RNA sequence: GGGAACGACUCGAGUAGAGUCGAAAAUGUAAACUGGGGCAGGGUGGCCGCGUUUAUGCACAUCUGCAGGUACAUCGUCAGGACCUUUCCGUCCAGCAUGGAUAGGACAGAGGUUGCUCUGACUAAACCGUGUAAAACAGUUCGCUGUUUUACACGGAAAAGAAACAACAACAACAAC
Reactivity to DMS in 0.01 (KOAc 150mM, MgCl2 10mM, bicine 150mM(pH8.5), 24C), signal-to-noise 4, nucleotides 027 to 126: u010g020u000a050a100a140c060u000g020g000g010g000c090a070g020g000g020u000g010g020c080c090g010c060g000u000u000u000a050u020g020c060a100c090a060u000c050u000g020c040a040g010g010u000a050c060a040u000c150g020u010c020a030g000g000a050c020c010u000u000u010c030c020g010u010c000c030a200g030c230a140u010g020g010a030u000a100g050g010a060c300a060g000a040g010g010u000u000g010c080u020c020u000g000a050c040u000a050a050a200
Reactivity to 2A3 in 0.01 (KOAc 150mM, MgCl2 10mM, bicine 150mM(pH8.5), 24C), signal-to-noise 3, nucleotides 027 to 126: u070g000u010a000a000a200c040u050g000g020g110g000c020a040g020g050g020u010g050g020c050c040g030c030g030u070u090u080a150u160g010c030a010c000a130u010c030u070g000c040a030g020g020u030a020c020a070u080c050g010u020c010a010g030g010a010c010c000u010u050u020c020c000g000u000c010c000a040g140c070a230u190g030g020a040u090a300g010g000a030c020a050g050a020g010g010u010u060g010c020u020c010u040g000a000c000u010a000a020a000